About this RNA
This 207-nucleotide RNA was probed chemically with 2A3. Conditions: 150 mM KOAc, 10 mM MgCl2 and 150 mM bicine (pH 8.5), 24 C. It was measured as part of the RMDB library RNAMAK.

[RMDB]
RNA sequence: GGGAACGACUCGAGUAGAGUCGAAAAUGAGUCUUCGGACUCAAUUUAAGGGGUCGAAGCUCGUUCGCCUUUUGACGUUCUGAAGCCUCCACGGAACGAUAAGGAACUACGAACGGGCUUCGACGGAGGCACCCAUACGAGCUAAUUCGUUAGCUAAUCCCUUGGAUAGUUUCGACUAUCCAAGGGAAAAAGAAACAACAACAACAAC
Reactivity to 2A3 in 0.01 (KOAc 150mM, MgCl2 10mM, bicine 150mM(pH8.5), 24C), signal-to-noise 1, nucleotides 027 to 156: u030g010a010g020u010c030u060u090c300g110g000a000c000u000c010a000a000u080u060u040a170a060g030g020g000g000u000c010g000a000a000g000c050u000c030g010u010u010c020g140c000c050u000u020u010u130g290a160c040g000u010u010c000u000g040a070a020g010c000c000u000c000c000a000c020g010g010a010a000c010g010a020u060a090a030g070g000a100a090c140u150a010c300g000a010a000c000g000g010g000c000u000u000c000g000a010c060g000g000a020g000g010c010a040c000c010c000a020u100a190c140g060a000g030c000u030a010a010u210u180c180g170u150u100a000g000c000u010a030a100